[RMDB]
RNA sequence: GGGAACGACUCGAGUAGAGUCGAAAACGAAGAGCAGCUGAUUCGAUGCAACGGGGCGCUGCGGCUUCCCGAGCUGGAUUUGGCCGCGGGCAUGGACAGCGCCCGGGAGUGGCUCCGUGACAGGAUAGAGAGGGCUUUAUUUCGAUAAAGCCCUCUCAAAAGAAACAACAACAACAAC
Reactivity to 2A3 in 0.01 (KOAc 150mM, MgCl2 10mM, bicine 150mM(pH8.5), 24C), signal-to-noise 2, nucleotides 027 to 126: c000g040a080a070g020a000g030c010a000g000c040u050g010a280u150u140c060g080a100u090g010c000a010a000c010g000g030g000g010c020g000c010u030g000c000g040g000c010u070u020c050c000c000g020a050g010c060u120g040g140a300u180u210u300g050g000c030c000g080c000g040g000g000c050a150u260g060g010a050c010a020g020c050g000c000c000c000g000g040g000a050g010u090g010g000c010u020c000c000g000u020g020a030c020a070g050g000a090u230a120
Reactivity to DMS in 0.01 (KOAc 150mM, MgCl2 10mM, bicine 150mM(pH8.5), 24C), signal-to-noise 2, nucleotides 027 to 126: c060g020a120a010g010a110g020c000a160g010c000u040g000a100u000u000c060g020a110u010g000c060a140a100c080g000g000g010g010c000g000c000u030g000c060g050g010c020u000u020c000c010c000g000a300g000c010u000g000g010a160u030u010u030g000g000c000c010g010c080g020g000g000c170a060u010g000g000a220c030a020g000c020g030c000c010c000g000g000g020a060g000u000g000g000c040u000c000c030g000u020g040a100c120a100g010g000a090u020a110